RNA sequence: GGGAACGACUCGAGUAGAGUCGAAAACAACACGUCCUCGUCGUACAGAGUGGUAACAUGUGUCACCACAUAUCCAAGCUUGGGUACACGGGCUUGACCCAACCCCUUGGUCGGAUGGUGGCACAUGAAAAGAAGUAACACUUCGGUGUUACUUCAAGACUUUAAUGUUCUUCGGAACAUUAAAGUCAAAAGAAACAACAACAACAAC
Reactivity to 2A3 in 0.01 (KOAc 150mM, MgCl2 10mM, bicine 150mM(pH8.5), 24C), signal-to-noise 8, nucleotides 027 to 156: c040a010a030c010a020c070g110u090c010c020u050c020g160u050c030g040u150a080c080a100g050a010g060u110g060g080u160a120a030c000a000u000g000u000g000u000c000a000c020c010a040c030a050u170a040u080c000c000a010a010g040c100u190u120g010g000g010u080a090c080a080c170g010g020g000c040u260u300g130a300c000c000c000a000a040c000c010c000c000u010u010g000g040u020c050g120g020a170u020g000g000u000g000g000c000a000c000a000u000g000a000a000a000a020g000a000a000g000u000a000a000c000a000c010u040u060c200g050g010u010g000u000u000a000c000u000u000c000a000a010
Reactivity to DMS in 0.01 (KOAc 150mM, MgCl2 10mM, bicine 150mM(pH8.5), 24C), signal-to-noise 3, nucleotides 027 to 156: c040a080a090c000a090c050g010u010c030c020u000c030g030u010c050g000u000a110c100a090g010a180g010u000g000g040u010a090a190c000a030u010g020u000g030u000c000a000c000c000a040c040a090u000a140u000c010c000a020a060g020c110u000u000g020g020g060u000a040c120a110c080g010g030g030c020u000u000g010a170c020c010c000a080a050c020c020c010c010u000u000g000g010u000c080g000g000a060u000g010g020u000g030g010c010a000c010a010u000g000a030a060a090a160g000a020a020g010u000a010a010c010a020c000u000u010c280g050g020u000g010u000u000a000c000u000u000c000a030a120

About this RNA:
Structure probing data (2A3 and DMS) for a 207-nucleotide construct. High 2A3 reactivity points to a flexible backbone, as in loops and unpaired stretches. For DMS the reverse transcriptase was MarathonRT. The data come from the RNA Mapping Database (RMDB), library M2RFPK. For 2A3 the reverse transcriptase was SuperScript II with manganese. Conditions: 150 mM KOAc, 10 mM MgCl2 and 150 mM bicine (pH 8.5), 24 C. For 2A3, 9,720 sequencing reads were counted. For DMS, 7,675 sequencing reads were counted.